[RMDB]
RNA sequence: GGGAACGACUCGAGUAGAGUCGAAAAUUUCCAUAACUUAUGUCAGCAAAGUGGGAAUAUUGUACAGUGUGUGUUGAAGUUCCUAUACAACAUUGUUUAUCUGCCUUUUGUUUGUUUGUAAGGAAUGAAAUCGUCGAACAUUCGUGUUCGACGAUUUAAAAGAAACAACAACAACAAC
Reactivity to DMS in 0.01 (KOAc 150mM, MgCl2 10mM, bicine 150mM(pH8.5), 24C), signal-to-noise 1, nucleotides 027 to 126: u000u000u000c000c000a160u010a120a190c040u000u010a030u000g000u000c040a060g030c040a030a020a030g040u030g010g000g000a110a050u010a040u020u010g000u010a040c000a040g030u000g000u000g050u000g020u000u000g010a170a140g010u000u000c000c000u000a160u000a060c010a040a010c020a010u010u000g010u010u000u000a040u000c050u000g020c030c000u000u000u000u000g020u000u000u000g020u000u000u000g020u000a060a050g010g020a110a080u010g010
This 177-nucleotide RNA was probed chemically with DMS. For DMS, 1,311 sequencing reads were counted. In probing experiments dimethyl sulfate is read out at A N1 and C N3, which are open when not base-paired. Conditions: 150 mM KOAc, 10 mM MgCl2 and 150 mM bicine (pH 8.5), 24 C.